Structure probing data (2A3) for a 177-nucleotide construct. For 2A3, 368 sequencing reads were counted. The reactions ran in a buffer of 150 mM KOAc, 10 mM MgCl2 and 150 mM bicine (pH 8.5), at 24 C. It was measured as part of the RMDB library OK1LIB. 2A3 adducts were read by reverse transcription with SuperScript II with manganese.

RNA sequence: GGGAACGACUCGAGUAGAGUCGAAAAAUGCCGCAUUCAGCGACGGUGACUCUAGUGGGCGACUGUCGAUCUAGCGUUGACAUCUACAUACUAUAUAGUAAUACCAAUACUCAAGACUACGAAACGGACCGAUCCGACUCUUCGGAGUCGGAUCGGUAAAAGAAACAACAACAACAAC
Reactivity to 2A3 in 0.01 (KOAc 150mM, MgCl2 10mM, bicine 150mM(pH8.5), 24C), signal-to-noise 1, nucleotides 027 to 126: a000u180g000c000c000g000c060a000u160u280c070a000g000c150g090a000c020g040g080u060g130a140c000u000c110u110a000g140u060g020g000g000c000g090a180c090u060g000u000c000g000a000u020c000u140a000g010c000g110u000u280g000a000c000a060u040c000u000a030c000a300u050a150c000u050a290u090a090u060a170g030u020a090a090u000a050c000c000a040a060u020a000c000u030c060a040a030g000a020c140u000a000c060g110a050a120a000c060g160g020